[RMDB]
RNA sequence: GGGAACGACUCGAGUAGAGUCGAAAACAGUGCAUCUCUAGGGGAGAUUAGCAGGUCUGAAGAUGACCCAAACCUAGAAUUUGAAAAAGCCCUAGAAGGGUCUAUCGAGAAGAGUGAUGAGAGAAGCGAUUCUACACACUUUCGAGUGUGUAGAAUCAAAAGAAACAACAACAACAAC
Reactivity to 2A3 in 0.01 (KOAc 150mM, MgCl2 10mM, bicine 150mM(pH8.5), 24C), signal-to-noise 1, nucleotides 027 to 126: c020a030g080u030g100c020a020u020c020u020c000u150a080g000g000g080g000a080g040a140u120u170a090g020c080a050g060g000u000c010u030g060a100a000g060a170u090g010a020c040c000c000a080a020a000c000c010u040a040g020a130a110u060u050u070g020a130a080a020a000a050g040c060c050c000u080a100g070a180a060g100g000g000u000c100u130a020u030c070g020a080g010a140a000g060a030g040u090g020a030u110g030a030g030a010g020a100a070g090c080
Reactivity to DMS in 0.01 (KOAc 150mM, MgCl2 10mM, bicine 150mM(pH8.5), 24C), signal-to-noise 3, nucleotides 027 to 126: c060a190g000u010g010c040a060u000c010u000c030u000a030g010g010g010g000a300g000a060u000u000a060g000c140a110g000g000u010c020u000g000a160a180g010a090u010g000a050c020c020c010a030a140a210c190c010u000a030g000a080a100u010u000u000g000a090a070a140a130a230g010c180c080c000u000a080g000a140a200g000g000g000u000c000u010a100u000c060g010a120g000a120a050g000a080g020u010g000a060u000g010a120g010a080g000a090a120g010c140
The record gives the reactivity of an RNA of 177 nucleotides to 2A3 and DMS. For DMS the reverse transcriptase was MarathonRT. The data come from the RNA Mapping Database (RMDB), library OK2TRN.